[RMDB]
RNA sequence: GGGAACGACUCGAGUAGAGUCGAAAAAAUUCUUUCCAAGUAUUUCUUUUGUGUUUUUUAACCUAUAAAAGAUAAUGGAAUGUUUUAUAGACUGGAUUUUAUCUCAUCCCCUUUCCCUCUCCCAACUUCAUCCAUAACUAUUCGUAGUUAUGGAUGAAAAAGAAACAACAACAACAAC
Reactivity to 2A3 in 0.01 (KOAc 150mM, MgCl2 10mM, bicine 150mM(pH8.5), 24C), signal-to-noise 4, nucleotides 027 to 126: a000a010u080u040c030u050u020u000c010c010a070a060g070u030a100u030u170u020c000u020u030u020u030g050u020g020u060u010u040u020u070u270a040a060c010c010u110a080u100a230a020a010a000g010a010u050a110a060u070g000g020a040a020u040g030u010u080u020u050a110u050a070g100a070c080u030g040g050a060u050u120u060u110a090u070c030u010c020a080u050c010c010c000c000u010u010u020c000c010c000u000c000u010c000c000c000a010a040c010u000
The record gives the reactivity of an RNA of 177 nucleotides to 2A3. Reactivities are rounded to 0.1 and cut off at 0 and 3. For 2A3 the reverse transcriptase was SuperScript II with manganese.